[RMDB]
RNA sequence: GGGAACGACUCGAGUAGAGUCGAAAAAUGCGGUUCAAGAGGCUUGAGGUCGGGGCUAGCCGCGUGCCAUGCGCGAACCCCAUUGCUAUGAUACACAUGGCGCUCGUGGAGCUCGGCGAGGACGAGGGUACAGAGACUGUUUCGACAGUCUCUGUACAAAAGAAACAACAACAACAAC
Reactivity to 2A3 in 0.01 (KOAc 150mM, MgCl2 10mM, bicine 150mM(pH8.5), 24C), signal-to-noise 3, nucleotides 027 to 126: a000u100g020c030g040g000u050u060c050a070a020g030a050g130g000c040u070u080g040a040g010g070u070c040g000g030g010g000c030u020a020g040c040c010g000c000g010u010g050c020c020a090u090g020c020g010c010g040a040a120c030c000c000c000a040u030u110g000c020u070a060u220g040a090u070a110c080a000c010a060u020g020g000c020g000c030u030c040g030u080g030g020a010g010c000u020c040g020g000c030g030a030g020g020a020c020g040a050g080g080
Reactivity to DMS in 0.01 (KOAc 150mM, MgCl2 10mM, bicine 150mM(pH8.5), 24C), signal-to-noise 6, nucleotides 027 to 126: a070u010g010c090g000g010u000u010c070a070a100g000a090g010g000c040u010u000g020a070g010g020u000c070g010g000g010g010c060u010a110g010c090c030g020c060g020u000g020c040c040a050u000g010c060g000c040g010a080a140c040c020c010c020a100u010u010g010c080u010a060u010g000a150u000a080c160a110c040a030u000g010g010c030g010c060u000c060g020u010g010g010a100g010c030u010c050g010g020c030g010a080g010g000a060c080g000a110g000g010
This 177-nucleotide RNA was probed chemically with 2A3 and DMS. The RNA was probed in 150 mM KOAc, 10 mM MgCl2 and 150 mM bicine (pH 8.5) at 24 C. For DMS the reverse transcriptase was MarathonRT. It was measured as part of the RMDB library OK2TST. High 2A3 reactivity points to a flexible backbone, as in loops and unpaired stretches. For DMS, 7,751 sequencing reads were counted. The 2A3 profile rests on 6,811 reads.